[RMDB]
RNA sequence: GGGAACGACUCGAGUAGAGUCGAAAAGUGAGGGCAUGCAGGCCUGGAUGGGGCAGCUGGGAUGGUCCAAAAGGGUGGCCUCACCAGCCCUGUGUUCCCUAGAAACCAAUGUGCUUCGGCACAUUGGCGUUUGUAUUCGGUUCGCCGAAUACAAACGAAAAGAAACAACAACAACAAC
Reactivity to 2A3 in 0.01 (KOAc 150mM, MgCl2 10mM, bicine 150mM(pH8.5), 24C), signal-to-noise 2, nucleotides 027 to 126: g190u150g080a010g000g000g000c020a010u030g030c000a000g000g020c010c000u030g030g010a230u040g010g010g010g000c010a030g060c040u070g020g000g050a160u220g070g110u130c030c000a110a200a070a010g180g040g050u150g040g020c000c010u030c010a010c000c000a000g000c010c000c000u000g000u010g000u010u020c000c020c000u020a040g080a050a040a000c010c010a010a000u000g000u000g010c010u030u060c160g080g000c000a010c000a000u000u000g000g000
Reactivity to DMS in 0.01 (KOAc 150mM, MgCl2 10mM, bicine 150mM(pH8.5), 24C), signal-to-noise 2, nucleotides 027 to 126: g020u000g010a050g000g000g010c090a030u000g010c020a040g000g010c300c010u000g000g010a110u000g030g010g000g020c040a120g000c030u000g010g010g000a260u010g030g010u020c010c040a100a100a130a170g030g000g000u000g000g000c020c000u000c040a040c010c000a010g020c300c010c000u000g030u000g010u000u000c000c000c000u000a050g000a110a100a180c000c000a020a010u000g000u000g000c000u000u010c230g020g000c000a010c000a000u000u000g000g000
Annotation: Chemical mapping of a 177-nucleotide RNA with 2A3 and DMS. Values cover nucleotides 27 to 126. It was measured as part of the RMDB library RFMREP. The RNA was probed in 150 mM KOAc, 10 mM MgCl2 and 150 mM bicine (pH 8.5) at 24 C. DMS adducts were read by reverse transcription with MarathonRT.